[RMDB]
RNA sequence: GGGAACGACUCGAGUAGAGUCGAAAACAAAGUCAAGCCAAGUUCGUCGGCAGCGGAGGCGACGCUCUGAUAGGCUAGUAGUAGAUCCUCGCCACUCACUACUGUAGUCUCCAUGAACCUAGUGUCCAGACACGCAGUAAUUCGUUACUGCGUGUCUAAAAGAAACAACAACAACAAC
Reactivity to DMS in 0.01 (KOAc 150mM, MgCl2 10mM, bicine 150mM(pH8.5), 24C), signal-to-noise 4, nucleotides 027 to 126: c110a080a090a130g010u010c080a100a120g000c060c030a090a080g010u000u000c070g000u000c040g030g020c110a060g010c060g000g000a100g000g020c000g010a070c090g010c030u010c030u020g010a120u000a050g000g000c020u000a030g010u000a050g000u000a070g010a090u000c030c030u010c060g000c030c040a120c100u010c080a040c030u020a060c060u010g010u000a090g000u000c010u000c040c030a090u000g000a070a100c030c010u010a070g000u010g010u000c050c080
Reactivity to 2A3 in 0.01 (KOAc 150mM, MgCl2 10mM, bicine 150mM(pH8.5), 24C), signal-to-noise 3, nucleotides 027 to 126: c010a030a130a030g110u140c060a040a040g020c020c000a050a050g050u070u060c020g060u020c030g120g070c050a020g040c050g080g060a070g090g000c030g030a020c010g030c000u020c030u060g080a130u080a110g040g000c010u030a020g040u030a010g020u010a040g030a080u060c010c030u020c030g000c020c000a010c000u040c010a050c060u050a010c010u020g070u110a020g040u000c010u000c000c020a040u060g030a040a030c020c010u020a050g050u040g040u130c050c010
This 177-nucleotide RNA was probed chemically with DMS and 2A3. For 2A3, 3,455 sequencing reads were counted. 2A3 adducts were read by reverse transcription with SuperScript II with manganese. Reactivities are given for positions 27 through 126. Conditions: 150 mM KOAc, 10 mM MgCl2 and 150 mM bicine (pH 8.5), 24 C.